[RMDB]
RNA sequence: GGGAACGACUCGAGUAGAGUCGAAAAGAUAUGGAUCCAUAGUGGACAUGAGUGGUGCUCGGAAACGAGCACACUCAACAGCCAUAUGGAUCCUAAGUCAAAACCUGACGCGUUCGCGCGUCAGGAACCUCAUGUUAAGGUUCGCCUUAACAUGAGGAAAAGAAACAACAACAACAAC
Reactivity to DMS in 0.01 (KOAc 150mM, MgCl2 10mM, bicine 150mM(pH8.5), 24C), signal-to-noise 4, nucleotides 027 to 126: g000a000u000a050u010g000g010a010u000c000c000a000u010a040g030u020g030g000a040c120a100u010g000a040g010u000g000g020u010g020c000u000c000g010g000a010a010a040c000g010a010g010c000a010c000a000c000u000c000a050a040c220a180g000c010c000a040u000a010u000g010g000a010u000c000c000u000a000a050g000u000c010a160a100a120a170c010c000u000g000a010c000g010c010g020u000u030c300g020c010g020c000g010u000c000a000g000g010a030a060
Reactivity to 2A3 in 0.01 (KOAc 150mM, MgCl2 10mM, bicine 150mM(pH8.5), 24C), signal-to-noise 6, nucleotides 027 to 126: g010a010u010a020u040g000g000a010u000c010c000a010u030a040g300u210g060g040a090c240a300u190g010a000g000u090g180g240u080g030c010u010c000g010g010a010a020a010c000g000a000g000c010a000c010a000c000u010c020a000a020c100a010g000c010c000a000u010a010u010g000g000a000u000c000c000u010a000a000g010u000c000a030a020a070a200c000c010u000g000a000c000g030c000g050u070u120c300g000c010g010c000g150u000c000a000g000g000a000a030